[RMDB]
RNA sequence: GGGAACGACUCGAGUAGAGUCGAAAAAGGCUGCUAAAUCAGGUUGGGUUAGCUAUUCAUCUCAAUCCAAUCACUUUCAAGUGACUGACAGCAAUGGGAAGUUAACAGCCAGUGGUAAGGGACUGCACCACCAGCACUCAUUCGUGAGUGCUGGUGGAAAAGAAACAACAACAACAAC
Reactivity to DMS in 0.01 (KOAc 150mM, MgCl2 10mM, bicine 150mM(pH8.5), 24C), signal-to-noise 1, nucleotides 027 to 126: a130g020g000c030u000g050c060u010a090a060a040u010c170a050g020g010u000u010g000g030g030u010u000a010g000c140u010a070u020u000c160a120u000c030u000c050a050a130u000c050c000a050a130u000c000a080c020u010u040u010c220a050a060g030u030g020a020c100u000g000a120c100a130g000c130a050a090u000g000g020g000a060a060g000u010u040a030a040c020a000g000c050c030a030g000u020g000g000u000a030a050g010g000g000a100c060u000g010c130a150

The data come from the RNA Mapping Database (RMDB), library OK2TST. Structure probing data (DMS) for a 177-nucleotide construct. Reactivities are given for positions 27 through 126. The RNA was probed in 150 mM KOAc, 10 mM MgCl2 and 150 mM bicine (pH 8.5) at 24 C. Reactivities are rounded to 0.1 and cut off at 0 and 3.